[RMDB]
RNA sequence: GGGAACGACUCGAGUAGAGUCGAAAAUCAAGAGCUGUGCUGCCAGUGGGGAGGGCUGAGGAUCUGGCGGGUGAGGCAGGAGAGGCCUGCUGGCCAAGCCUAUGUGCCCCUCUCCAUGCCCACCCACGUAAGAGCAAGUAUUCGUACUUGCUCUUACAAAAGAAACAACAACAACAAC
Reactivity to DMS in 0.01 (KOAc 150mM, MgCl2 10mM, bicine 150mM(pH8.5), 24C), signal-to-noise 9, nucleotides 027 to 126: u010c090a090a100g000a130g010c060u010g010u000g010c060u000g010c040c040a070g020u000g010g000g000g010a110g010g000g020c080u010g010a090g000g000a140u010c060u000g010g020c080g010g010g010u000g000a100g020g010c010a060g000g000a060g000a060g010g010c200c070u010g020c100u000g010g010c020c080a050a120g010c050c080u000a070u000g010u010g010c070c100c010c010u000c000u000c000c010a050u000g010c000c000c010a050c010c010c010a020c120
Reactivity to 2A3 in 0.01 (KOAc 150mM, MgCl2 10mM, bicine 150mM(pH8.5), 24C), signal-to-noise 8, nucleotides 027 to 126: u100c030a050a030g030a020g070c060u060g040u130g080c050u060g040c030c020a050g020u050g030g010g010g030a120g010g030g010c080u050g030a050g040g020a060u050c040u080g050g040c040g010g020g000u030g060a180g010g000c010a010g020g030a050g000a010g010g030c020c060u080g050c080u040g030g000c020c020a060a020g010c010c030u100a130u130g100u120g010c020c010c000c000u000c000u000c010c000a070u020g000c000c000c000a020c000c000c000a020c020